[RMDB]
RNA sequence: GGGAACGACUCGAGUAGAGUCGAAAAAGCUGCUCAGUAUACGUACUGAGCAGCAAGGGGUUGAAGCGGACACCCCUUCAGGCGCGCGCCCAAGCUCCGUACGUCGCCUCAUACGUGAGGCGGCGAAAUAGGUGUAUCUGGUUCGCCAGAUACACAAGUAUUUACAGCUCUUCGGAGCUGUAAAUACAAAAGAAACAACAACAACAAC
Reactivity to 2A3 in 0.01 (KOAc 150mM, MgCl2 10mM, bicine 150mM(pH8.5), 24C), signal-to-noise 2, nucleotides 027 to 156: a000g000c000u010g000c000u000c000a000g000u000a010u050a100c200g060u000a010c010u000g030a000g000c000a000g000c000a000a000g000g000g000g000u000u090g140a190a010g010c000g000g000a000c000a000c010c010c020c000u020u140c050a020g010g000c080g060c070g040c060g010c120c010c040a000a010g020c110u020c010c000g010u020a080c000g010u010c010g000c000c000u000c010a040u040a100c230g100u040g020a000g000g000c000g000g000c000g010a010a000a000u160a010g000g050u030g010u010a040u000c000u000g000g070u020u050c150g000c120c000a000g010a000u060a000c000a000c000a000a010

Source: RMDB library M2RFPK, as collected in RNAgym. An RNA of 207 nucleotides, treated with 2A3 and read out base by base. 2A3 adducts were read by reverse transcription with SuperScript II with manganese. The reactions ran in a buffer of 150 mM KOAc, 10 mM MgCl2 and 150 mM bicine (pH 8.5), at 24 C.